[RMDB]
RNA sequence: GGGAACGACUCGAGUAGAGUCGAAAACUGGCCCAUCUCGUGCUUCGCGUAGUCCUGGUCGUCGGCCGUGGCACCGAUCGCGGCGGUGUUGCGGACGACCUCCUGCCCGAGACUCAGGUCGGACAACGAACGGUCGCUCACCCAGUUCUGCACGUUCAGCGCAAGAUUUUUUCGAAAAUCUUGCGCUAAAAGAAACAACAACAACAAC
Reactivity to 2A3 in 0.01 (KOAc 150mM, MgCl2 10mM, bicine 150mM(pH8.5), 24C), signal-to-noise 1, nucleotides 027 to 156: c030u050g030g000c000c000c000a020u000c040u040c050g060u050g010c080u090u070c070g020c040g150u160a090g030u110c050c040u050g020g010u000c010g030u000c010g060g030c010c020g000u000g020g010c000a020c030c000g070a100u160c060g030c130g300g010c010g000g040u030g010u000u020g040c000g080g000a020c000g000a000c010c000u010c000c040u000g000c010c000c000g050a030g000a020c020u030c130a020g070g000u070c020g010g010a050c050a150a010c110g040a040a020c020g000g090u210c090g030c030u080c030a050c000c030c000a020g020u090u050c050u050g000c090a060c090g040u070u100c070